Structure probing data (2A3) for a 177-nucleotide construct.
RNA sequence: GGGAACGACUCGAGUAGAGUCGAAAAAUCCUCUUUAGACUCUUGUACCCCUAAAUUUGGCGGGAAUUCGUUCCUGCCAUUUUGCUUUUCUUGCAAGACAAUAGCGUCGCAAGACAACAGUGGAGCUACGAGUCAGAAACUUCGGUUUCUGACUCGUAAAAGAAACAACAACAACAAC
Reactivity to 2A3 in 0.01 (KOAc 150mM, MgCl2 10mM, bicine 150mM(pH8.5), 24C), signal-to-noise 1, nucleotides 027 to 126: a000u050c020c000u120c020u000u150u050a120g030a160c000u050c000u020u020g080u100a130c000c000c000c000u070a030a030a180u040u000u050g030g000c030g060g030g060a000a000u080u030c160g060u030u000c000c030u010g000c000c000a000u030u000u000u080g060c080u050u000u000u160c000u000u000g030c030a210a000g000a040c000a130a300u210a050g300c160g030u060c020g000c000a000a000g060a030c030a010a010c000a120g090u060g260g030a070g000c000u010
The 2A3 profile rests on 348 reads.